RNA sequence: GGGAACGACUCGAGUAGAGUCGAAAAGCAUUCCACUUCGGUGGAAUGCAAAUGCCGGCUGCAAGAAAAGUGCUUCAAAGAGUGGGAGCACUGCCGAAGUAAAAAGUUCCAUGUUCGCAUGGAACAACUCCAAGUUAUCCUUCGGGAUAACUUGGAGAAAAGAAACAACAACAACAAC
Reactivity to 2A3 in 0.01 (KOAc 150mM, MgCl2 10mM, bicine 150mM(pH8.5), 24C), signal-to-noise 1, nucleotides 027 to 126: g000c000a030u020u020c000c000a000c000u050u020c130g070g030u000g000g000a000a000u010g000c030a020a030a020u080g020c000c000g000g010c030u100g000c040a050a080g030a130a180a050a050g000u000g000c000u000u020c030a060a140a080g140a160g080u210g030g000g000a000g040c000a000c000u000g020c000c000g090a070a010g060u190a060a100a050a020a010g000u000u040c010c010a010u000g060u030u010c220g000c050a000u000g010g000a000a010c000a000a010
The record gives the reactivity of an RNA of 177 nucleotides to 2A3. It was measured as part of the RMDB library M2PK50. 2A3 adducts were read by reverse transcription with SuperScript II with manganese. The RNA was probed in 150 mM KOAc, 10 mM MgCl2 and 150 mM bicine (pH 8.5) at 24 C. Reactivities are given for positions 27 through 126.